[RMDB]
RNA sequence: GGGAACGACUCGAGUAGAGUCGAAAAUAAGGGCGGCUCGGCGGAGUAAAGCCUGCAACGCAGUCCGUUGGGGGCUCGCCAGGUGUGACUGCUGCAUUCGAGCCUCUGGUCCGUGCGGCUAAGGUGCGCAUGGUACCGGCUUCGGCCGGUGCCAUGUAAAAGAAACAACAACAACAAC
Reactivity to DMS in 0.01 (KOAc 150mM, MgCl2 10mM, bicine 150mM(pH8.5), 24C), signal-to-noise 6, nucleotides 027 to 126: u030a080a060g000g010g010c050g000g000c040u000c050g000g000c020g000g000a060g010u000a060a100a250g010c050c010u010g010c070a080a090c070g000c110a060g010u010c020c010g010u020u030g020g010g010g020g010c030u000c040g010c210c020a030g000g000u010g000u030g010a050c040u000g000c000u000g000c030a010u020u030c040g000a060g000c020c000u000c040u020g000g000u020c020c030g020u010g010c050g000g000c040u000a080a090g000g010u000g000c090
Reactivity to 2A3 in 0.01 (KOAc 150mM, MgCl2 10mM, bicine 150mM(pH8.5), 24C), signal-to-noise 3, nucleotides 027 to 126: u130a020a020g050g030g000c020g000g010c000u000c010g010g010c010g020g000a050g020u020a000a040a000g010c000c000u010g030c010a030a030c040g020c040a010g030u020c000c000g020u030u080g070g000g000g000g050c000u010c010g000c010c000a010g010g000u000g020u030g040a020c020u050g010c000u000g020c010a010u060u080c040g010a010g000c000c000u020c000u020g010g000u000c010c010g000u060g020c010g010g010c010u030a040a050g060g000u030g010c030